The data come from the RNA Mapping Database (RMDB), library OK2TRN.
Structure probing data (DMS and 2A3) for a 177-nucleotide construct.
For DMS the reverse transcriptase was MarathonRT.
The reactions ran in a buffer of 150 mM KOAc, 10 mM MgCl2 and 150 mM bicine (pH 8.5), at 24 C.
For 2A3 the reverse transcriptase was SuperScript II with manganese.
High DMS reactivity at an A or C suggests that its Watson-Crick edge is free.
[RMDB]
RNA sequence: GGGAACGACUCGAGUAGAGUCGAAAAACAACUUCAACUGCUGCAUACCGAUAAUAUCUUGACGAUUAUGCAUUCGUGUCCUGAUAGCUAAUGCCAUGAAACAAUUCUUUUCAAUCGCACUUGCACCGUCUAUCUCUCUCUUCGGAGAGAGAUAGACAAAAGAAACAACAACAACAAC
Reactivity to DMS in 0.01 (KOAc 150mM, MgCl2 10mM, bicine 150mM(pH8.5), 24C), signal-to-noise 1, nucleotides 027 to 126: a070c110a090a130c110u000u010c050a020a060c010u000g040c090u000g000c050a020u000a050c140c060g030a130u010a070a020u000a100u000c080u010u000g000a160c170g000a120u000u000a040u010g000c080a130u010u000c040g000u000g010u000c030c000u000g000a100u000a100g000c040u000a060a060u000g000c060c050a020u000g010a060a060a050c090a080a100u000u010c050u010u000u010u000c050a030a120u000c110g000c010a020c040u010u000g000c060a060c200c080
Reactivity to 2A3 in 0.01 (KOAc 150mM, MgCl2 10mM, bicine 150mM(pH8.5), 24C), signal-to-noise 2, nucleotides 027 to 126: a000c010a070a080c000u070u040c050a080a060c050u100g060c020u050g000c050a020u040a090c090c010g030a030u100a110a060u080a130u050c030u080u160g080a060c000g050a040u100u010a030u190g030c030a030u010u090c060g010u000g030u040c030c010u080g060a170u070a040g030c030u040a060a010u030g030c040c020a100u100g090a040a060a050c050a060a130u080u050c030u050u060u080u080c030a060a080u050c030g000c090a040c070u030u060g010c020a010c010c060